An RNA of 177 nucleotides, treated with DMS and 2A3 and read out base by base. Values are in units of 0.01, from 0 to 300, in steps of 10. Source: RMDB libraries RFM100 and RFMREP, as collected in RNAgym. 2A3 adducts were read by reverse transcription with SuperScript II with manganese. The RNA was probed in 150 mM KOAc, 10 mM MgCl2 and 150 mM bicine (pH 8.5) at 24 C.
RNA sequence: GGGAACGACUCGAGUAGAGUCGAAAAUGCUACAAUGGACGGUACAAAGAGCUGCAAGACCGCGAGGUGGAGCUAAUCUCAUAAAACCGUUCUCAGUUCGGAUUGUAGGCUGCAACUCGCCUACAUGGAUACGUCAGUGUUUCGACACUGACGUAUCAAAAGAAACAACAACAACAAC
Reactivity to DMS in 0.01 (KOAc 150mM, MgCl2 10mM, bicine 150mM(pH8.5), 24C), signal-to-noise 7, nucleotides 027 to 126: u030g040c120u000a040c100a110a090u000g000g000a040c000g000g000u000a020c180a130a160a070g000a000g040c230u020g010c020a040a300g000a020c000c010g000c300g000a160g020g010u000g000g000a300g000c000u000a040a050u020c020u010c010a040u010a050a060a060a050c040c000g000u000u000c000u010c150a070g000u020u000c060g000g020a050u020u010g020u000a000g000g000c000u020g000c210a110a100c170u020c110g000c010c000u010a000c000a000u010g030
Reactivity to 2A3 in 0.01 (KOAc 150mM, MgCl2 10mM, bicine 150mM(pH8.5), 24C), signal-to-noise 8, nucleotides 027 to 126: u160g030c030u050a060c080a050a120u160g000g000a000c010g010g010u130a030c060a060a110a020g020a010g020c070u050g010c030a010a050g020a030c000c000g030c030g040a060g000g000u010g000g000a000g000c000u040a080a080u070c010u000c000a030u170a060a050a000a000c000c000g000u010u010c000u000c010a060g020u050u080c020g070g040a090u010u060g000u010a010g000g010c020u050g020c030a070a080c060u050c130g000c000c000u010a010c010a020u020g130